Record summary
An RNA of 177 nucleotides, treated with DMS and read out base by base. For DMS, 1,172 sequencing reads were counted. It was measured as part of the RMDB library TTRINS. The RNA was probed in 150 mM KOAc, 10 mM MgCl2 and 150 mM bicine (pH 8.5) at 24 C.

RNA sequence: GGGAACGACUCGAGUAGAGUCGAAAAGAUAUGGACGCCAAUAAGUCGUCUUUAGGGUGGAGCUACUGGUCGGAAACGACCACUAGCGAUGAAACCCAUAAAGACGACUUAUUGGCGUCCUAAGUCAGUACUUCUCUAACUUCGGUUAGAGAAGUACAAAAGAAACAACAACAACAAC
Reactivity to DMS in 0.01 (KOAc 150mM, MgCl2 10mM, bicine 150mM(pH8.5), 24C), signal-to-noise 1, nucleotides 027 to 126: g040a060u000a300u010g000g000a040c010g040c000c000a030a060u000a010a010g030u010c000g000u010c000u000u000u000a040g010g010g020u000g010g000a080g040c000u030a030c100u000g010g000u010c000g020g000a110a130a260c040g010a030c000c000a000c110u000a000g000c000g020a070u000g010a120a240a040c010c000c000a060u000a010a000a000g000a020c010g000a000c000u010u000a000u000u000g010g000c000g000u000c000c000u010a030a070g020u020c070a130